[RMDB]
RNA sequence: GGGAACGACUCGAGUAGAGUCGAAAACGCAGAGGGUUCUGAUAACAAAGAACCUAGAUAGCCGCAUCGGUAUUAUAGGAUGUAGUCGGUGAGCCGGAAUGCCUGCACCGUAAGCCUAUAAGUAAAUUUAAGUGUAAUCACUUCGGUGAUUACACAACACGAUGUCGAUGUUCGCAUCGACAUCGUGAAAAGAAACAACAACAACAAC
Reactivity to 2A3 in 0.01 (KOAc 150mM, MgCl2 10mM, bicine 150mM(pH8.5), 24C), signal-to-noise 1, nucleotides 027 to 156: c060g080c070a040g050a080g220g000g040u000u000c000u040g090a110u080a070a070c020a070a100a000g000a000a020c000c000u000a010g040a060u030a000g000c060c100g110c180a240u150c070g150g020u080a080u160u060a050u020a030g130g000a160u050g060u180a040g160u090c000g080g000u030g000a040g010c080c080g060g040a020a000u040g030c020c020u150g030c000a030c000c000g010u060a010a000g030c000c000u030a020u020a070a030g030u080a050a110a120u130u270u100a100a060g000u000g040u000a000a050u000c000a000c020u030u000c160g120g000u000g000a000u000u000a000c000a000c000a000a000
Chemical mapping of a 207-nucleotide RNA with 2A3. Conditions: 150 mM KOAc, 10 mM MgCl2 and 150 mM bicine (pH 8.5), 24 C. Values are in units of 0.01, from 0 to 300, in steps of 10.